[RMDB]
Structure probing data (2A3 and DMS) for a 177-nucleotide construct.
Values cover nucleotides 27 to 126.
For DMS the reverse transcriptase was MarathonRT.
2A3 is a SHAPE reagent: it acylates the 2'-hydroxyl of flexible nucleotides of all four kinds.
Source: RMDB library OK1LIB, as collected in RNAgym.
The reactions ran in a buffer of 150 mM KOAc, 10 mM MgCl2 and 150 mM bicine (pH 8.5), at 24 C.
RNA sequence: GGGAACGACUCGAGUAGAGUCGAAAAGGGGUCUGGUCUUGGCUAGAGGACGGGGAAAUCGAAAUGCUGCUCGUGAACGGCAAAGGCACGUCGGCAUACCCGUUCGUGAGUUGCAUGCUGGAAUUCAAUAAAAUACCUGCUUCGGCAGGUAUUUUAUAAAAGAAACAACAACAACAAC
Reactivity to 2A3 in 0.01 (KOAc 150mM, MgCl2 10mM, bicine 150mM(pH8.5), 24C), signal-to-noise 3, nucleotides 027 to 126: g000g000g000g010u060c040u030g090g010u020c040u180u130g040g020c030u070a050g040a070g080g060a080c080g010g010g000g020a020a010a030u170c050g010a160a020a000u030g000c000u000g010c000u020c000g010u000g010a000a000c000g010g030c100a050a060a100g030g000c050a050c130g300u200c080g080g010c000a020u090a100c000c000c000g000u010u010c000g000u020g000a050g000u000u040g000c000a000u030g010c030u070g030g010a080a090u070u000c040a020
Reactivity to DMS in 0.01 (KOAc 150mM, MgCl2 10mM, bicine 150mM(pH8.5), 24C), signal-to-noise 4, nucleotides 027 to 126: g020g000g020g000u000c080u000g000g020u020c090u050u020g030g000c040u020a110g010a110g010g000a100c030g000g030g000g000a060a040a070u060c070g010a080a140a040u000g000c030u000g000c000u000c040g000u000g000a010a020c020g000g000c100a010a110a140g000g010c020a100c300g010u010c150g000g000c040a060u030a190c300c030c000g010u000u000c000g010u010g010a010g010u010u010g000c030a010u010g000c040u000g010g000a080a120u020u030c110a110